[RMDB]
Description:
An RNA of 177 nucleotides, treated with DMS and 2A3 and read out base by base. Conditions: 150 mM KOAc, 10 mM MgCl2 and 150 mM bicine (pH 8.5), 24 C.
RNA sequence: GGGAACGACUCGAGUAGAGUCGAAAACGGAUCGGAUCUGGUACCAUGAUAUAGCUAGGUACCGAUCCAGUCCAUGGUGUGGUACGCUGUAGGUACCUAGCGGUACACUAUGGUACCAUGUAGUCGGCCGUCUAGUGGAUUUCGAUCCACUAGACGGAAAAGAAACAACAACAACAAC
Reactivity to DMS in 0.01 (KOAc 150mM, MgCl2 10mM, bicine 150mM(pH8.5), 24C), signal-to-noise 3, nucleotides 027 to 126: c110g000g010a060u000c030g030g000a040u010c050u010g030g000u000a000c000c000a100u010g010a160u010a080u010a150g020c020u010a090g010g000u000a010c000c000g010a110u000c180c030a020g030u000c000c020a050u000g010g030u000g020u000g010g000u020a100c230g000c060u000g010u000a150g000g000u000a000c000c010u000a030g000c060g020g010u000a060c150a060c070u010a020u000g000g000u000a000c000c000a000u010g010u010a080g020u000c050g000g020
Reactivity to 2A3 in 0.01 (KOAc 150mM, MgCl2 10mM, bicine 150mM(pH8.5), 24C), signal-to-noise 3, nucleotides 027 to 126: c040g050g030a060u120c050g010g020a010u040c030u130g000g010u000a000c010c020a010u030g140a050u070a050u060a130g090c030u040a030g000g000u000a000c000c020g000a010u000c000c000a000g000u000c000c000a030u160g260g090u300g000u060g100g030u070a030c120g010c090u060g020u030a010g020g020u000a020c000c000u000a030g030c050g040g020u030a020c210a030c050u060a010u030g030g020u010a000c000c000a000u040g030u030a060g080u030c070g040g070